RNA sequence: GGGAACGACUCGAGUAGAGUCGAAAAUAAGCGUGAAUCAUAGUACACCGAGGGUCCACAUCUUCGUGUUGCUGUUCGCAGCAAUAUUCGGAUAACCCUCUCGGUGUCUCCAUUGAGCACAAACAUUAAGCCGAAAAUUUUUCGAAAUUUUCGGCUUAAAAGAAACAACAACAACAAC
Reactivity to 2A3 in 0.01 (KOAc 150mM, MgCl2 10mM, bicine 150mM(pH8.5), 24C), signal-to-noise 1, nucleotides 027 to 126: u250a010a010g120c040g020u020g050a050a130u050c000a030u040a030g030u020a020c000a000c000c000g000a000g040g000g040u080c170c000a080c010a130u030c110u000u000c020g000u000g000u000u000g030c000u000g010u020u020c300g020c020a000g000c000a000a000u000a010u010u050c020g030g000a010u020a060a010c010c000c040u070c010u010c010g010g000u000g000u000c000u040c010c040a090u000u110g000a000g000c050a000c010a010a040a030c080a030u030u000